[RMDB]
Chemical mapping of a 177-nucleotide RNA with 2A3 and DMS. Source: RMDB library OK2TRN, as collected in RNAgym. The RNA was probed in 150 mM KOAc, 10 mM MgCl2 and 150 mM bicine (pH 8.5) at 24 C. For 2A3, 1,335 sequencing reads were counted.
RNA sequence: GGGAACGACUCGAGUAGAGUCGAAAACGUUCUGGAUUGCUUCCGGAGCGACCGAGGAAGAGCCUUGCUGAACGGUGACGUUUACAUAUCCGUCAUACAUGAUCGGAGUAGUCCACUUCACGACAUAUCGAGAUGACUCUUUCGAGAGUCAUCUCGAAAAAGAAACAACAACAACAAC
Reactivity to 2A3 in 0.01 (KOAc 150mM, MgCl2 10mM, bicine 150mM(pH8.5), 24C), signal-to-noise 2, nucleotides 027 to 126: c000g010u020u000c010u020g020g000a070u060u250g080c070u170u000c030c010g000g010a010g020c030g040a000c020c030g050a030g000g080a020a110g020a020g010c000c070u030u060g070c100u070g020a090a030c030g000g000u070g030a020c050g030u040u090u110a060c060a020u240a060u120c010c010g000u030c050a010u130a280c060a100u140g030a060u120c060g030g030a030g020u150a020g010u040c020c000a030c020u080u060c040a020c040g100a020c040a030u150a080
Reactivity to DMS in 0.01 (KOAc 150mM, MgCl2 10mM, bicine 150mM(pH8.5), 24C), signal-to-noise 2, nucleotides 027 to 126: c030g030u000u010c030u010g000g000a010u000u000g000c260u020u000c000c010g030g000a070g000c020g000a090c080c060g000a160g010g000a110a030g010a170g000c030c050u000u000g000c100u000g000a070a030c070g020g050u000g010a030c070g040u000u000u000a140c130a100u010a090u000c030c010g000u000c040a030u000a110c240a090u000g000a090u020c000g010g000a060g010u000a060g000u000c080c030a100c100u000u000c040a040c090g000a140c130a050u000a170